[RMDB]
RNA sequence: GGGAACGACUCGAGUAGAGUCGAAAAGUAUAGAAGCAUGAGACCGCAUGCGUUAUACGAUGAAUCUCGGUCGAAUCCGUUGUGCGAAAGCACUUCGGUAAUGCAUAUCGGUAGACAGAUCAGCCCGGAUCAGCUACCGUAAUUAGUACGGGCAAGAGGGCCAUUUAUUAUUCGUAAUAAAUGGCCCAAAAGAAACAACAACAACAAC
Reactivity to 2A3 in 0.01 (KOAc 150mM, MgCl2 10mM, bicine 150mM(pH8.5), 24C), signal-to-noise 1, nucleotides 027 to 156: g010u010a090u000a100g060a200a010g000c000a000u010g020a040g000a090c010c000g080c050a010u070g030c000g010u050u020a050u050a060c090g050a020u170g020a140a210u000c060u010c070g080g000u040c000g000a000a010u040c000c000g000u000u000g000u000g000c000g090a000a050a100g000c000a000c000u000u010c020g000g000u050a060a070u130g030c020a050u110a090u280c020g010g000u000a000g090a110c040a040g020a000u000c000a020g000c040c000c000g000g000a010u010c000a000g030c030u030a000c000c000g020u000a000a000u100u080a010g100u050a010c030g000g000g040c010a070a000g060a040
Reactivity to DMS in 0.01 (KOAc 150mM, MgCl2 10mM, bicine 150mM(pH8.5), 24C), signal-to-noise 1, nucleotides 027 to 156: g000u000a050u000a070g000a070a120g000c020a030u000g020a180g000a160c080c160g000c160a060u000g020c030g070u000u000a000u000a050c050g020a070u010g000a160a160u020c050u000c040g000g030u000c000g040a100a160u020c000c090g040u000u000g040u000g040c000g020a160a150a300g030c000a010c000u000u010c000g000g040u000a060a090u010g030c120a170u000a190u000c000g070g020u040a000g070a160c150a270g000a110u010c010a050g000c040c000c040g000g010a160u010c010a140g030c050u020a000c000c000g020u020a000a050u000u030a130g000u000a110c020g000g020g010c000a180a170g020a300
Annotation:
Structure probing data (2A3 and DMS) for a 207-nucleotide construct. The DMS profile rests on 1,462 reads. DMS adducts were read by reverse transcription with MarathonRT. 2A3 adducts were read by reverse transcription with SuperScript II with manganese. Reactivities are given for positions 27 through 156. The data come from the RNA Mapping Database (RMDB), library OK3TST. The RNA was probed in 150 mM KOAc, 10 mM MgCl2 and 150 mM bicine (pH 8.5) at 24 C.